[RMDB]
RNA sequence: GGGAACGACUCGAGUAGAGUCGAAAAAAAAAGACAAGGGAGGAAUGCCGCAAGAAACCAAAGAAAAUCAUGGGUUUCAUUAAACUUCAUUAUUGAAGAGGUUUAAUAAAGCUGGUUCUAUAGGUGCUGAUUUGUACUUUUUCGAAAGUACAAAUCAAAAAGAAACAACAACAACAAC
Reactivity to 2A3 in 0.01 (KOAc 150mM, MgCl2 10mM, bicine 150mM(pH8.5), 24C), signal-to-noise 5, nucleotides 027 to 126: a000a010a000a000a000g040a030c050a010a020g090g020g000a030g020g040a130a060u100g050c010c000g000c030a040a000g040a050a020a020c010c010a090a100a000g130a030a110a020a020u130c060a090u090g120g000g000u010u010u020c010a000u010u010a000a000a010c010u020u020c020a120u050u300a110u150u250g050a120a050g000a010g000g020u010u020u020a020a020u080a070a070a000g000c040u060g020g040u060u020c030u070a080u060a100g060g010u050g030c040
Reactivity to DMS in 0.01 (KOAc 150mM, MgCl2 10mM, bicine 150mM(pH8.5), 24C), signal-to-noise 5, nucleotides 027 to 126: a040a040a060a090a020g000a070c050a030a060g000g000g000a060g000g000a080a040u010g000c020c050g020c090a100a080g000a040a030a010c010c010a050a080a080g010a100a050a050a050u020c120a080u030g010g000g000u000u000u010c050a040u000u000a000a010a010c000u000u000c000a080u040u030a150u060u040g020a110a070g000a020g000g000u000u000u000a000a000u000a050a050a080g000c040u010g020g000u000u000c030u000a060u010a080g000g010u010g000c120

An RNA of 177 nucleotides, treated with 2A3 and DMS and read out base by base. The 2A3 profile rests on 2,946 reads.